[RMDB]
RNA sequence: GGGAACGACUCGAGUAGAGUCGAAAAUCUGCGACAGGGCCGAAGCGUGAAACAAAAUCCAUCUCGGCAAUGCUCUGCGCUUCUACAUACCAGCAGCCGAGGACAGACGCAGGUUACAAGCGCAGCAAAAUAAUUUUUAAUUCGUUAAAAAUUAUUUAAAAGAAACAACAACAACAAC
Reactivity to 2A3 in 0.01 (KOAc 150mM, MgCl2 10mM, bicine 150mM(pH8.5), 24C), signal-to-noise 6, nucleotides 027 to 126: u010c000u020g000c000g040a040c030a160g040g050g000c030c020g080a130a030g040c060g030u060g060a100a050a040c090a030a120a040a030u040c040c000a070u030c010u000c000g010g000c010a020a060u050g010c010u020c060u110g010c040g020c030u090u030c030u130a120c030a140u170a110c020c040a020g020c020a010g100c020c000g010a010g000g040a030c030a070g030a010c000g000c020a030g000g030u020u060a070c020a070a040g000c000g000c010a020g020c030a020
Reactivity to DMS in 0.01 (KOAc 150mM, MgCl2 10mM, bicine 150mM(pH8.5), 24C), signal-to-noise 6, nucleotides 027 to 126: u020c020u000g020c020g000a120c080a130g010g020g010c040c030g000a090a080g000c100g030u000g010a120a120a090c170a050a080a100a110u030c060c080a170u030c010u000c000g000g000c010a090a100u020g000c040u030c040u010g000c020g020c020u020u020c160u020a090c210a090u020a100c070c040a110g010c050a090g000c020c000g010a030g010g010a080c150a080g000a070c020g010c020a030g000g000u000u020a050c100a070a080g010c010g010c010a020g000c200a060

Annotation:
Chemical mapping of a 177-nucleotide RNA with 2A3 and DMS. Conditions: 150 mM KOAc, 10 mM MgCl2 and 150 mM bicine (pH 8.5), 24 C. Reactivities are given for positions 27 through 126. It was measured as part of the RMDB library OK1LIB. DMS adducts were read by reverse transcription with MarathonRT.